[RMDB]
RNA sequence: GGGAACGACUCGAGUAGAGUCGAAAAGAUAUGGAACCAUCGUGCUUUUGACGGCUUGGUGUCGGAAACGACACCCAAGCCGAUAAGCACAUGGUUCCUAAGUCAAACCGAUGGUUCGCCAUCGGAAUCAAGAUACAGUGUUCGCACUGUAUCUUGAAAAAGAAACAACAACAACAAC
Reactivity to 2A3 in 0.01 (KOAc 150mM, MgCl2 10mM, bicine 150mM(pH8.5), 24C), signal-to-noise 6, nucleotides 027 to 126: g020a010u030a020u110g000g000a000a000c010c010a010u060c280g000u000g000c030u160u210u280u300g300a270c130g000g000c000u010u000g010g000u010g000u000c000g000g000a020a040a030c010g000a000c000a010c020c010c010a000a000g000c000c000g000a000u010a010a000g010c000a000c000a000u000g000g000u000u000c000c010u000a010a000g010u010c030a060a070a130c000c000g010a010u010g000g120u070u110c300g050c120c000a000u000c000g010g010a010a140
Reactivity to DMS in 0.01 (KOAc 150mM, MgCl2 10mM, bicine 150mM(pH8.5), 24C), signal-to-noise 6, nucleotides 027 to 126: g010a020u000a300u010g000g000a000a010c000c000a000u000c280g040u000g010c000u000u000u010u010g010a290c160g010g020c010u020u000g000g020u000g010u000c000g010g000a060a040a150c000g010a000c000a000c160c080c130a000a000g030c010c000g010a010u000a000a010g010c000a010c000a010u000g000g000u000u000c000c000u000a010a060g010u000c010a120a120a220c010c000g010a020u000g000g010u000u010c300g020c010c000a020u000c010g010g010a050a060
The data come from the RNA Mapping Database (RMDB), library TTRDES. Structure probing data (2A3 and DMS) for a 177-nucleotide construct.